Structure probing data (DMS and 2A3) for a 177-nucleotide construct. DMS adducts were read by reverse transcription with MarathonRT. It was measured as part of the RMDB library TTRINS. 2A3 adducts were read by reverse transcription with SuperScript II with manganese. The reactions ran in a buffer of 150 mM KOAc, 10 mM MgCl2 and 150 mM bicine (pH 8.5), at 24 C.
RNA sequence: GGGAACGACUCGAGUAGAGUCGAAAAGAUAUGGAUCCCUAACUUCGACGAUCACGAUUGAUGUCACAGUAUAUCGGAAACGAUAUAUCACAGCAUCAAUCGUGGGAGAAGGUGGGAUCCUAAGUCAUCUAUCCCCUAACUUCGGUUAGGGGAUAGAAAAAGAAACAACAACAACAAC
Reactivity to DMS in 0.01 (KOAc 150mM, MgCl2 10mM, bicine 150mM(pH8.5), 24C), signal-to-noise 3, nucleotides 027 to 126: g010a090u000a300u030g010g010a020u000c000c000c000u010a110a150c000u000u000c000g010a080c240g010a060u010c000a000c010g020a000u000u000g000a010u010g000u010c050a140c300a300g000u010a000u000a000u000c010g000g010a140a120a210c010g020a000u000a000u000a000u000c020a160c300a240g000c010a000u010c000a020a010u000c000g020u000g000g000g000a020g000a010a000g010g000u010g030g000g010a000u010c000c000u000a010a080g000u010c050a120
Reactivity to 2A3 in 0.01 (KOAc 150mM, MgCl2 10mM, bicine 150mM(pH8.5), 24C), signal-to-noise 3, nucleotides 027 to 126: g030a030u130a060u210g060g020a010u020c030c000c050u120a300a300c040u060u010c020g300a300c020g000a210u000c010a000c010g000a010u000u000g010a010u020g190u230c030a010c020a130g050u010a000u010a000u000c000g010g010a060a060a060c020g030a000u000a000u010a020u070c040a030c010a060g040c010a010u000c000a020a000u000c000g000u000g010g000g000a000g000a010a000g030g000u020g050g000g000a000u050c000c000u010a030a020g020u010c010a040